[RMDB]
RNA sequence: GGGAACGACUCGAGUAGAGUCGAAAAUUGUAUUUUUUAGGAGAGUCAGGGUUUCACCAUAUUGGCCAAGCGGGUCUCGAGCUCCUGACCUCAUGAUCCACCCACCUUGGCCUCCCAAAGUGCUGGGCAGGUAAUCAUGGUUCGCCAUGAUUACCUGAAAAGAAACAACAACAACAAC
Reactivity to 2A3 in 0.01 (KOAc 150mM, MgCl2 10mM, bicine 150mM(pH8.5), 24C), signal-to-noise 5, nucleotides 027 to 126: u080u100g070u080a140u070u120u060u030u100u210a120g110g030a040g010a040g020u030c010a000g030g040g030u070u240u210c080a110c050c010a060u160a180u210u240g010g000c010c010a040a020g020c080g090g030g010u000c060u070c200g040a010g010c040u040c080c000u010g000a020c000c010u010c030a060u100g020a020u000c040c040a050c020c000c020a060c020c000u000u030g010g000c000c010u050c000c000c000a120a110a010g130u180g060c070u030g020g000g010
Reactivity to DMS in 0.01 (KOAc 150mM, MgCl2 10mM, bicine 150mM(pH8.5), 24C), signal-to-noise 2, nucleotides 027 to 126: u020u030g010u010a030u000u000u030u010u010u000a130g020g000a010g010a160g040u000c000a010g000g030g030u020u020u030c100a120c130c100a090u040a120u040u020g010g000c000c020a060a060g000c240g000g000g000u000c020u020c110g000a090g000c170u010c000c050u010g000a020c010c020u060c000a040u010g000a070u000c020c040a050c050c010c030a040c130c020u000u020g000g000c030c010u010c020c010c010a040a030a070g000u040g020c080u000g000g010g000